[RMDB]
RNA sequence: GGGAACGACUCGAGUAGAGUCGAAAAUGCCGUGGGCGUUGAUGUAGGAAAUCUGGUCUUCGGUGAGACCGGCAUCGGCAAGGGCGGCGCGCACCGUGCCGAUGGCAGGCGAAGCGUCCGGUUUGGACAGGACGUCAGGUUUCGACCUGACGUCCUGAAAAGAAACAACAACAACAAC
Reactivity to DMS in 0.01 (KOAc 150mM, MgCl2 10mM, bicine 150mM(pH8.5), 24C), signal-to-noise 1, nucleotides 027 to 126: u000g020c030c040g020u020g020g000g020c020g040u000u010g020a060u010g000u020a130g030g000a090a090a060u000c000u000g010g020u000c000u000u000c130g040g000u000g000a070g010a090c010c000g000g000c020a000u010c000g010g000c020a060a040g000g010g000c070g000g040c170g000c040g030c040a110c020c000g000u010g030c010c000g020a030u000g010g070c020a070g010g010c050g000a080a090g000c160g000u000c010c000g010g000u000u000u000g040g000a250